The record gives the reactivity of an RNA of 207 nucleotides to 2A3 and DMS. For 2A3, 574 sequencing reads were counted. For 2A3 the reverse transcriptase was SuperScript II with manganese.
RNA sequence: GGGAACGACUCGAGUAGAGUCGAAAAAUAACGGUUCGCUGGUUGCCACGGGGGCCAGCUCCAUGUCAUGGGAGUACCGUUAUACCCUCAACGUGGUGAUUGAGGAUUUCAGCGGCGACCAGAAUCUGCUGAUGGCCCCGGUUUUGCUGUGGCUGCGUGGAUCUCUAUGAUUCGUCAUAGAGAUCCAAAAAGAAACAACAACAACAAC
Reactivity to 2A3 in 0.01 (KOAc 150mM, MgCl2 10mM, bicine 150mM(pH8.5), 24C), signal-to-noise 1, nucleotides 027 to 156: a000u050a030a000c000g010g010u080u080c060g030c030u020g050g010u010u030g000c010c040a110c150g050g000g020g000g000c010c000a000g000c010u000c010c000a070u160g250u300c100a060u160g080g010g020a060g090u050a030c000c000g000u010u010a020u040a010c000c000c000u010c020a040a040c030g080u230g050g030u100g090a260u030u000g010a020g030g010a010u020u040u150c050a050g100c010g050g000c000g000a000c000c000a020g050a020a210u120c100u200g050c010u040g030a080u030g000g000c030c030c000c000g000g000u030u030u060u030g000c000u020g020u040g000g020c030u010g000c050g110
Reactivity to DMS in 0.01 (KOAc 150mM, MgCl2 10mM, bicine 150mM(pH8.5), 24C), signal-to-noise 1, nucleotides 027 to 156: a060u010a010a040c050g030g020u010u000c090g010c020u000g030g030u010u000g020c010c050a130c010g030g030g040g140g010c010c020a040g040c010u000c020c010a070u000g000u010c190a170u000g000g000g010a070g030u030a040c020c020g020u000u000a160u010a090c030c000c000u000c040a050a000c010g020u010g050g020u030g000a130u000u140g010a060g040g000a060u000u010u000c060a040g010c050g030g010c060g010a120c030c020a090g020a060a080u000c120u010g030c070u000g000a070u000g020g000c030c000c000c020g030g000u000u000u000u000g000c000u010g040u000g000g060c010u010g010c110g050